[RMDB]
RNA sequence: GGGAACGACUCGAGUAGAGUCGAAAACAUCUUUCCUCCCUACACAGUGACUCCAGCUUGGGAGGGGCAGGGCUAGGCUGAGCCAGCACUCCCUGUGGUGUCUGCCUGCCACGUGCAGCUCUGGUGUAAAACCUGGAGAAGUUCGCUUCUCCAGGAACUGUAAGACCUAGUUCGCUAGGUCUUACAGAAAAGAAACAACAACAACAAC
Reactivity to 2A3 in 0.01 (KOAc 150mM, MgCl2 10mM, bicine 150mM(pH8.5), 24C), signal-to-noise 4, nucleotides 027 to 156: c020a100u070c080u090u110u060c000c010u000c010c000c010u080a040c080a010c020a070g060u040g120a050c010u010c050c000a030g010c080u130u070g010g000g000a010g000g000g020g000c030a070g000g060g020c030u170a040g080g000c050u060g050a020g070c030c020a010g020c010a020c010u050c010c030c020u050g030u070g020g010u010g040u000c020u020g020c010c010u020g000c010c010a140c140g120u170g050c040a010g010c010u010c020u100g060g020u010g010u040a070a100a030a040c000c000u000g000g000a000g000a000a000g010u020u050c150g040c100u000u010c000u030c000c010a000g000g000a000a000
Reactivity to DMS in 0.01 (KOAc 150mM, MgCl2 10mM, bicine 150mM(pH8.5), 24C), signal-to-noise 2, nucleotides 027 to 156: c110a120u000c060u000u000u000c030c020u010c070c010c010u000a160c120a120c130a080g010u010g010a120c020u000c000c020a180g020c090u030u020g000g050g010a020g000g010g020g020c030a090g000g000g020c020u000a030g030g000c050u010g000a230g010c010c020a110g020c050a050c020u000c010c040c020u000g000u000g030g010u000g020u000c040u010g010c080c030u000g020c010c010a020c070g040u000g000c010a050g020c040u000c030u010g000g020u000g000u000a050a020a100a170c010c020u000g000g000a020g010a050a030g020u020u010c300g020c020u000u000c000u000c010c000a010g000g000a000a020